[RMDB]
RNA sequence: GGGAACGACUCGAGUAGAGUCGAAAACGGAAGCAUUAAAACCAUUCGAGCUAGUCAAUGCGUGGCGUGUCUCUCCGCAGCGUGUUGGCGAAUCUAAAGAGUGACUAAGCAUGUAGUACCGAGGAUGAUAAGAGCAAUUCGUUCGCGAAUUGCUCAACAUUUCACUCGAGUUCGCUCGAGUGAAAUGAAAAGAAACAACAACAACAAC
Reactivity to DMS in 0.01 (KOAc 150mM, MgCl2 10mM, bicine 150mM(pH8.5), 24C), signal-to-noise 2, nucleotides 027 to 156: c040g030g030a270a040g000c040a040u000u000a060a060a070a090c050c000a070u000u010c050g010a090g020c000u000a160g020u000c030a020a030u000g010c000g030u010g020g080c000g020u020g020u020c080u000c070u000c260c030g000c000a040g030c020g020u000g000u000u000g020g020c000g010a050a070u000c050u000a060a130a100g000a080g040u000g040a040c030u000a050a140g000c050a060u000g000u010a080g000u000a060c010c010g010a140g010g010a080u010g000a120u000a060a150g000a000g030c000a010a010u000u000c000g050u000u000c250g010c030g020a000a000u000u000g020c000u010c010a000a070
Reactivity to 2A3 in 0.01 (KOAc 150mM, MgCl2 10mM, bicine 150mM(pH8.5), 24C), signal-to-noise 4, nucleotides 027 to 156: c060g020g000a080a000g010c030a020u080u150a060a060a020a100c040c000a020u070u060c030g040a010g020c030u040a000g020u000c000a000a010u010g010c010g020u030g110g000c020g000u080g070u020c040u000c020u000c070c010g000c010a020g020c010g010u030g000u010u000g000g000c000g000a000a020u050c030u060a090a060a030g020a010g010u020g010a030c020u050a030a030g090c050a040u080g030u090a050g030u030a060c010c070g020a050g060g020a020u130g010a010u080a200a120g000a010g000c010a000a000u000u000c000g030u040u100c180g000c000g120a000a000u010u000g000c000u000c000a000a000